This 177-nucleotide RNA was probed chemically with DMS and 2A3. It was measured as part of the RMDB library TTRINS. 2A3 adducts were read by reverse transcription with SuperScript II with manganese. Conditions: 150 mM KOAc, 10 mM MgCl2 and 150 mM bicine (pH 8.5), 24 C.
RNA sequence: GGGAACGACUCGAGUAGAGUCGAAAAGAUAUGGACCUACUACCCACCUACUCCCAGGAAACCACGUUGAAGGCUAUCGGAAACGAUAGCUGGAGUGGUUUCCUGGGGUAGAGGUAGGUCCUAAGUCCAUUGGUUGAGAGUUCGCUCUCAACCAAUGAAAAGAAACAACAACAACAAC
Reactivity to DMS in 0.01 (KOAc 150mM, MgCl2 10mM, bicine 150mM(pH8.5), 24C), signal-to-noise 2, nucleotides 027 to 126: g010a140u000a130u000g020g000a010c000c010u010a010c030u000a100c010c030c040a300c100c000u000a000c000u030c010c000c000a010g000g000a000a000a000c000c000a020c000g000u000u040g010a220a160g000g010c000u000a000u000c000g020g010a180a140a260c010g000a020u000a000g020c000u000g000g020a060g030u000g000g010u000u000u000c010c000u000g000g000g000g000u000a000g000a120g010g000u000a000g010g010u000c010c010u000a010a060g010u000c090
Reactivity to 2A3 in 0.01 (KOAc 150mM, MgCl2 10mM, bicine 150mM(pH8.5), 24C), signal-to-noise 1, nucleotides 027 to 126: g180a050u300a200u300g000g000a020c020c000u050a020c030u300a280c020c040c030a020c030c020u010a060c010u200c000c010c000a020g000g000a000a000a000c010c000a010c020g280u270u030g010a000a010g000g020c000u000a000u000c000g000g080a180a080a050c010g000a000u010a030g060c000u010g000g010a030g030u000g020g000u020u000u000c020c000u000g010g000g000g000u020a000g020a000g000g000u000a000g010g000u000c010c000u010a020a060g070u200c030